[RMDB]
RNA sequence: GGGAACGACUCGAGUAGAGUCGAAAAGAAGCCAUCCAAAUAAUUAGCCGAAAAAUGCCCGGUUUAUGGAUGGUUAAAAAGAGAGAGAGAGAGAGCUCUCUCUUUUUAAAACCGGGCUAAGAGAAAAGGGAAAUACAUACUUCGGUAUGUAUUUCCCAAAAGAAACAACAACAACAAC
Reactivity to 2A3 in 0.01 (KOAc 150mM, MgCl2 10mM, bicine 150mM(pH8.5), 24C), signal-to-noise 1, nucleotides 027 to 126: g050a040a010g000c000c000a000u000c000c000a110a000a020u110a110a110u280u190a060g160c030c020g240a100a080a000a000a050u050g000c000c000c030g040g010u010u010u020a020u070g000g000a010u000g000g000u000u000a000a000a020a000a000g000a010g000a000g000a000g000a000g040a000g240a030g080a140g000c000u000c000u000c000u000c020u000u000u000u000u020a000a000a000a000c010c000g010g020g000c000u000a020a000g010a000g020a040a040a080a080

Source: RMDB library OK1LIB, as collected in RNAgym. Structure probing data (2A3) for a 177-nucleotide construct. The RNA was probed in 150 mM KOAc, 10 mM MgCl2 and 150 mM bicine (pH 8.5) at 24 C.